Structure probing data (DMS and 2A3) for a 177-nucleotide construct. For 2A3 the reverse transcriptase was SuperScript II with manganese. The RNA was probed in 150 mM KOAc, 10 mM MgCl2 and 150 mM bicine (pH 8.5) at 24 C.
RNA sequence: GGGAACGACUCGAGUAGAGUCGAAAAGAUAUGGAUACGGCUAGGGAGCCAUAAUUCGGAAACGAAUUGAUGGCAUCGAUCUAGCGUAUCCUAAGUCAAAAGUUGAACGAGGUUCGCCUCGUUCAACGAAAUUGACUAGCUUCGGCUAGUCAAUUUCAAAAGAAACAACAACAACAAC
Reactivity to DMS in 0.01 (KOAc 150mM, MgCl2 10mM, bicine 150mM(pH8.5), 24C), signal-to-noise 5, nucleotides 027 to 126: g000a020u000a060u010g000g000a010u000a010c000g020g030c000u000a010g020g010g010a150g020c000c000a010u000a010a000u000u000c010g020g000a020a010a050c000g010a010a010u000u000g010a020u000g010g020c000a250u020c300g000a110u010c000u000a010g010c000g020u000a000u010c000c000u010a000a070g000u010c010a100a110a090a170g010u000u000g010a010a010c000g000a020g010g010u000u010c300g010c000c000u000c000g010u000u000c000a000a000c010
Reactivity to 2A3 in 0.01 (KOAc 150mM, MgCl2 10mM, bicine 150mM(pH8.5), 24C), signal-to-noise 4, nucleotides 027 to 126: g000a000u020a010u060g010g010a010u010a020c060g240g000c140u010a000g060g110g110a130g050c000c000a010u010a000a000u010u000c010g010g000a000a010a010c000g010a010a000u010u080g230a020u090g010g000c010a100u250c220g110a150u000c010u000a000g000c000g000u000a000u020c000c000u010a010a010g020u000c030a040a000a080a240g000u000u000g000a010a000c000g000a000g000g070u090u140c300g170c030c000u000c000g010u010u000c000a000a000c010